Overview:
Chemical mapping of a 177-nucleotide RNA with DMS and 2A3. Values cover nucleotides 27 to 126. The reactions ran in a buffer of 150 mM KOAc, 10 mM MgCl2 and 150 mM bicine (pH 8.5), at 24 C.
RNA sequence: GGGAACGACUCGAGUAGAGUCGAAAAGCCAGUGACAGAGCUGCCAUCAUCGGCGGUGCGCCUGCAGCAACCGAGACGCUGCCAAAAGCGGCAUACAUCGCCACUACAUGCGGCGUACUUCCGGCAAGAUGGGUAAUACCUUCGGGUAUUACCCAUCAAAAGAAACAACAACAACAAC
Reactivity to DMS in 0.01 (KOAc 150mM, MgCl2 10mM, bicine 150mM(pH8.5), 24C), signal-to-noise 3, nucleotides 027 to 126: g040c030c010a090g030u000g010a090c110a090g000a200g010c000u000g010c020c020a090u010c100a100u020c090g020g030c040g000g010u000g000c080g000c020c020u020g050c000a080g010c080a080a070c250c060g020a040g000a090c120g000c010u000g000c030c130a050a100a100a220g010c020g010g050c000a080u000a060c230a130u000c050g020c030c030a170c050u000a020c070a170u000g040c030g000g000c010g020u000a030c030u000u000c020c000g010g000c240a130a100
Reactivity to 2A3 in 0.01 (KOAc 150mM, MgCl2 10mM, bicine 150mM(pH8.5), 24C), signal-to-noise 2, nucleotides 027 to 126: g050c030c030a040g040u050g070a050c060a110g050a020g050c000u010g030c030c010a050u080c010a030u120c070g010g030c000g020g010u030g020c010g000c000c010u110g020c010a010g010c020a030a050c050c030g000a010g010a050c060g000c030u020g000c020c010a010a130a020a000g020c010g000g000c010a030u110a070c070a120u020c030g000c080c020a040c050u100a050c000a090u040g020c000g010g000c000g000u010a070c010u040u020c020c000g010g050c030a060a030